[RMDB]
RNA sequence: GGGAACGACUCGAGUAGAGUCGAAAAUGCUCUGGGCGGAAGAGUCUUCUGACUUUUCUAGCCUAUUCAGCAUUGCGCUCUUGAGGCCCGGCGAAACGCGGUUCGUCUGCUGAGGAUGCCUCCGCUAGUCGAGCGGACUUGGUCUCUUCCGCCCAAACAAUUGAACUAAGUUCGCUUAGUUCAAUUGAAAAGAAACAACAACAACAAC
Reactivity to DMS in 0.01 (KOAc 150mM, MgCl2 10mM, bicine 150mM(pH8.5), 24C), signal-to-noise 2, nucleotides 027 to 156: u010g010c040u010c060u000g020g030g020c000g000g020a030a010g010a040g040u000c020u000u000c150u000g010a090c020u010u010u000u000c050u010a030g020c020c060u000a030u000u000c050a060g000c020a230u000u010g020c140g010c020u010c030u000u000g010a140g030g010c010c030c050g000g000c010g010a100a070a100c070g020c080g000g010u000u010c040g010u010c030u010g000c060u000g000a100g020g010a120u010g010c070c020u000c020c080g010c030u000a170g010u010c070g000a120g050c000g010g010a050c250u000u000g020g010u000c050u010c020u010u000c020c030g000c020c010c000a030a090a120
Reactivity to 2A3 in 0.01 (KOAc 150mM, MgCl2 10mM, bicine 150mM(pH8.5), 24C), signal-to-noise 3, nucleotides 027 to 156: u130g010c010u010c020u030g010g010g000c000g000g000a010a000g000a010g000u000c020u070u020c040u100g300a300c010u020u040u020u010c000u020a010g000c000c000u020a050u050u060c040a000g000c010a020u060u290g070c160g010c050u060c030u090u150g090a100g020g030c020c020c040g050g000c040g050a080a080a050c140g030c080g130g080u060u060c020g030u020c050u060g020c040u050g030a030g050g030a120u110g030c000c040u090c050c020g000c000u000a020g030u050c020g020a010g000c010g000g000a040c070u110u130g060g020u050c000u000c000u000u000c000c000g020c000c010c000a020a020a010

The record gives the reactivity of an RNA of 207 nucleotides to DMS and 2A3. 2A3 adducts were read by reverse transcription with SuperScript II with manganese. For 2A3, 5,135 sequencing reads were counted. Conditions: 150 mM KOAc, 10 mM MgCl2 and 150 mM bicine (pH 8.5), 24 C. For DMS, 6,579 sequencing reads were counted.